[RMDB]
RNA sequence: GGGAACGACUCGAGUAGAGUCGAAAAGGGCAGCUCGGUAAGCUUCAUACCCAGUAGCGCAGCCUUCUCGAGCGUGGAGGCUGAGUUAUAAGUGCCCCAGUCGAAGAGUACUGGCAUUAGCGCGGUCCGUUCACACGGAAUUCGUUCCGUGUGAACGAAAAGAAACAACAACAACAAC
Reactivity to 2A3 in 0.01 (KOAc 150mM, MgCl2 10mM, bicine 150mM(pH8.5), 24C), signal-to-noise 2, nucleotides 027 to 126: g010g020g000c020a030g000c030u030c080g090g070u140a090a030g030c040u130u060c050a020u040a060c010c000c010a010g030u020a010g000c020g000c020a010g000c000c000u030u000c020u000c030g160a110g040c150g000u040g010g000a000g000g000c000u000g000a000g000u020u040a110u030a190a060g040u030g060c000c000c000c030a010g020u030c010g050a180a090g030a060g150u150a030c010u030g020g000c020a070u060u170a040g020c030g010c030g000g050u050c020
Reactivity to DMS in 0.01 (KOAc 150mM, MgCl2 10mM, bicine 150mM(pH8.5), 24C), signal-to-noise 3, nucleotides 027 to 126: g030g010g020c030a050g040c020u000c120g010g010u010a080a110g000c040u000u010c120a130u010a080c010c000c020a200g020u000a030g020c010g000c000a030g000c030c010u000u010c010u000c030g000a120g030c120g040u010g010g000a000g010g010c000u000g000a020g000u000u000a030u000a070a110g000u010g000c050c070c010c030a060g000u010c040g010a120a070g010a170g000u000a030c040u010g010g010c100a090u000u000a050g010c030g000c040g010g010u000c040

Structure probing data (2A3 and DMS) for a 177-nucleotide construct. In probing experiments dimethyl sulfate is read out at A N1 and C N3, which are open when not base-paired. The reactions ran in a buffer of 150 mM KOAc, 10 mM MgCl2 and 150 mM bicine (pH 8.5), at 24 C.